[RMDB]
RNA sequence: GGGAACGACUCGAGUAGAGUCGAAAACAUCCACUGCUACGGCAGUGGAUGAACGAGGUAGGUACGCCUACCUCGAAAGCAGGAUGUAUGCAUAUACAUUAAACGUCCAUGGUACGCCAUGGACGAAGACGACCUCACUGUUCGCAGUGAGGUCGUCAAAAGAAACAACAACAACAAC
Reactivity to 2A3 in 0.01 (KOAc 150mM, MgCl2 10mM, bicine 150mM(pH8.5), 24C), signal-to-noise 1, nucleotides 027 to 126: c010a000u060c000c000a000c010u000g000c000u030a110c230g150g000c000a000g010u030g010g020a000u000g010a010a000c070g000a000g010g000u000a010g000g040u010a010c120g070c030c000u010a000c000c000u010c010g000a010a020a000g080c070a090g180g070a060u030g010u000a010u050g120c120a040u170a010u030a240c040a000u090u110a120a190a020c010g010u000c000c000a000u010g000g010u060a050c270g020c050c000a000u000g010g020a000c000g000a000a000